[RMDB]
RNA sequence: GGGAACGACUCGAGUAGAGUCGAAAAAGCAUUUAGCCUGAUUACUCUUUAAAUCAAAUCAGGCAAUAGAGAGAAACUCGAGAGGUGAAAACCCGACAGCAUUCUGAAAUGUAUUUGGGAGUAAUCUAUGACUAUUGGGUCUUCGGACCCAAUAGAACCAUAGGAACAGUUUCGACUGUUCCUAUGGAAAAGAAACAACAACAACAAC
Reactivity to 2A3 in 0.01 (KOAc 150mM, MgCl2 10mM, bicine 150mM(pH8.5), 24C), signal-to-noise 2, nucleotides 027 to 156: a000g070c090a080u150u110u200a040g020c010c010u010g000a010u000u050a070c020u080c040u100u140u250a040a040a030u060c030a030a010a030u030c020a000g000g010c010a010a030u040a000g010a000g010a000g030a010a210a080c050u010c040g030a100g000a030g090g000u050g070a070a050a080a090c010c030c010g060a060c040a020g030c000a030u170u080c020u070g010a030a050a070u050g020u070a040u040u070u050g020g010g000a000g000u010a020a030u020c050u090a100u150g060a060c000u000a010u000u000g020g000g000u000c000u000u030c170g040g010a000c000c000c000a010a000u000a000g020a000a020
Reactivity to DMS in 0.01 (KOAc 150mM, MgCl2 10mM, bicine 150mM(pH8.5), 24C), signal-to-noise 1, nucleotides 027 to 156: a110g000c000a090u000u010u000a170g010c010c010u010g010a070u000u000a110c040u000c030u000u000u000a080a080a120u000c050a040a100a160u000c000a040g000g000c060a050a030u030a130g000a190g040a300g020a190a270a050c030u000c040g000a150g000a050g000g030u000g000a130a150a130a080c020c000c010g000a210c120a070g040c010a080u000u000c100u020g010a030a030a130u000g010u000a110u000u000u000g010g030g000a110g000u000a010a030u000c010u000a030u020g000a150c010u000a000u000u020g000g030g010u000c000u000u010c250g000g000a010c010c000c000a000a000u000a000g000a040a150